[RMDB]
RNA sequence: GGGAACGACUCGAGUAGAGUCGAAAAUGCAGCGAAGUCAGCGGUGACGAAGGAGAACUCGCCCUCGCCUUCAUAGGUCUUCAGAGUACCAUCGACCUCAACGAGUACGGCAAUGAAGCCUCCGUCGAUGAUACGCGUGAUUCGUCACGCGUAUCAUAAAAGAAACAACAACAACAAC
Reactivity to 2A3 in 0.01 (KOAc 150mM, MgCl2 10mM, bicine 150mM(pH8.5), 24C), signal-to-noise 6, nucleotides 027 to 126: u120g000c020a030g050c030g050a100a010g070u050c050a000g010c010g030g070u070g010a040c050g030a040a040g100g050a050g030a100a040c030u030c050g050c000c000c010u030c020g040c000c010u040u030c040a080u090a120g030g030u040c030u030u030c050a020g020a020g140u030a040c010c020a080u060c040g050a110c030c050u090c050a070a090c040g030a010g000u070a040c040g020g000c040a020a130u180g050a090a010g000c010c010u030c010c000g080u110c040g020
Reactivity to DMS in 0.01 (KOAc 150mM, MgCl2 10mM, bicine 150mM(pH8.5), 24C), signal-to-noise 4, nucleotides 027 to 126: u040g000c020a060g000c060g030a110a060g000u000c030a100g000c060g010g020u010g010a100c080g010a100a030g010g000a070g020a070a090c120u010c120g020c000c010c060u000c080g000c010c020u000u030c120a150u020a050g000g010u010c000u000u010c060a050g000a190g000u050a050c040c030a130u010c050g000a100c060c030u010c120a100a120c040g020a040g010u010a070c040g000g000c060a050a110u010g000a100a110g010c010c000u010c030c030g000u010c040g020